[RMDB]
RNA sequence: GGGAACGACUCGAGUAGAGUCGAAAAGCGAAAGUUGCCAUGAGACCGUAACUUUCGUAGUCAUUGAUAAAGGGGCAGGUCUCGCUCUUUUGUCAUUGCGGUUGCCUAGAGGCAUGGUGGUUUACCGAAAAGAGCUCAUUCUUCGGAAUGAGCUCAAGCUUUAUACUGGGUUCGCCCAGUAUAAAGCAAAAGAAACAACAACAACAAC
Reactivity to DMS in 0.01 (KOAc 150mM, MgCl2 10mM, bicine 150mM(pH8.5), 24C), signal-to-noise 2, nucleotides 027 to 156: g010c030g040a000a020a020g020u010u000g020c030c050a160u000g020a150g020a110c090c080g010u000a030a030c050u000u000u000c040g030u000a030g000u000c120a110u010u010g000a060u000a020a020a040g010g000g020g020c000a140g000g010u000c110u000c090g030c020u000c020u000u000u000u000g030u000c010a040u000u000g010c040g020g020u010u000g000c010c070u010a100g010a160g030g000c050a080u020g010g020u000g030g010u000u000u000a100c030c010g000a090a030a110a190g010a010g010c020u000c000a020u000u000c000u000u000c300g040g000a020a020u000g000a020g020c000u010c000a010a080
Reactivity to 2A3 in 0.01 (KOAc 150mM, MgCl2 10mM, bicine 150mM(pH8.5), 24C), signal-to-noise 3, nucleotides 027 to 156: g010c000g010a010a000a010g010u010u010g010c030c020a080u120g060a060g020a160c040c000g000u010a000a000c000u000u000u000c000g000u010a010g020u030c020a010u010u040g020a010u020a030a010a010g010g000g010g000c020a030g010g170u050c050u040c080g000c000u000c020u000u010u020u020g030u010c020a020u000u080g030c020g030g030u060u070g030c000c010u100a100g020a120g110g000c070a060u090g020g040u030g010g040u050u100u060a040c040c010g020a000a030a040a060g000a000g000c000u000c000a000u000u010c010u020u060c160g070g010a000a000u000g000a010g010c000u000c000a000a000
An RNA of 207 nucleotides, treated with DMS and 2A3 and read out base by base. Conditions: 150 mM KOAc, 10 mM MgCl2 and 150 mM bicine (pH 8.5), 24 C. The 2A3 profile rests on 4,163 reads. For DMS the reverse transcriptase was MarathonRT. The DMS profile rests on 4,554 reads.